An RNA of 207 nucleotides, treated with DMS and 2A3 and read out base by base. Conditions: 150 mM KOAc, 10 mM MgCl2 and 150 mM bicine (pH 8.5), 24 C. Source: RMDB library OK3TST, as collected in RNAgym. 2A3 adducts were read by reverse transcription with SuperScript II with manganese. Values are in units of 0.01, from 0 to 300, in steps of 10.
RNA sequence: GGGAACGACUCGAGUAGAGUCGAAAAUAUGUCAUUUGUUGUGCGUACAGCAGGUGGCACAACUUUCUCUAUGUACGCACAUAGUGGAAGUGAACUCAGUGCUUCUAUCGAAGUUCUGAGUGAACUUUGCUACUUCGAUAGAAGUGGUAAAGAAGUACGUGUCCACUCUGUUCGCAGAGUGGAUACGAAAAGAAACAACAACAACAAC
Reactivity to DMS in 0.01 (KOAc 150mM, MgCl2 10mM, bicine 150mM(pH8.5), 24C), signal-to-noise 4, nucleotides 027 to 156: u000a040u000g010u000c020a030u000u000u010g050u000u000g030u000g040c300g030u000a060c000a030g000c010a040g010g020u000g010g000c000a050c040a080a070c010u000u000u000c010u000c010u000a020u000g000u010a180c300g000c180a150c010a040u000a030g010u000g000g000a040a050g010u000g010a140a090c000u010c000a050g020u000g010c010u000u000c000u000a120u010c160g010a030a030g000u000u000c010u010g010a040g000u000g000a090a080c020u010u000u000g000c020u000a010c000u000u000c000g010a280u010a130g010a030a020g010u010g020g030u010a010a030a030g010a050a070g030u000a080
Reactivity to 2A3 in 0.01 (KOAc 150mM, MgCl2 10mM, bicine 150mM(pH8.5), 24C), signal-to-noise 9, nucleotides 027 to 156: u290a080u050g010u000c010a000u000u010u010g030u010u010g030u070g190c200g130u250a020c010a000g000c000a000g000g010u010g000g000c020a020c030a060a030c000u000u020u000c010u000c000u000a010u010g040u030a090c180g060c150a010c030a020u010a000g020u030g010g010a010a010g010u040g080a030a020c000u000c020a020g010u010g040c010u010u000c030u120a300u230c240g000a000a000g000u020u000c000u000g000a000g000u010g010a010a010c000u010u000u010g000c000u000a000c000u010u010c010g150a150u090a300g000a010a000g000u000g010g010u030a020a010a020g050a040a010g100u080a050